[RMDB]
RNA sequence: GGGAACGACUCGAGUAGAGUCGAAAAGAUAUGGAGAAACGGACCAUGUAAAUCCCAUGGGAGUCGUCCAUCGGAAACGAUGGUCCGACUUUGAUCAUGGAUUUACAUGGUCCGUUUCUCCUAAGUCCAUUUCAAAAAACUUCGGUUUUUUGAAAUGAAAAGAAACAACAACAACAAC
Reactivity to DMS in 0.01 (KOAc 150mM, MgCl2 10mM, bicine 150mM(pH8.5), 24C), signal-to-noise 2, nucleotides 027 to 126: g010a100u010a300u020g000g010a030g020a020a010a010c000g010g000a020c010c010a000u020g020u000a010a020a010u000c180c030c070a020u000g010g010g000a020g020u000c010g000u000c010c010a000u000c010g000g000a180a130a220c000g000a010u000g000g000u010c300c010g000a010c000u000u010u000g020a100u010c000a010u000g000g010a030u000u010u000a020c010a000u010g010g010u010c000c000g010u000u000u000c010u000c010c010u000a010a070g000u000c030
This 177-nucleotide RNA was probed chemically with DMS.
Conditions: 150 mM KOAc, 10 mM MgCl2 and 150 mM bicine (pH 8.5), 24 C.
For DMS the reverse transcriptase was MarathonRT.
DMS (dimethyl sulfate) methylates the pairing face of unpaired adenines and cytosines.
Source: RMDB library TTRINS, as collected in RNAgym.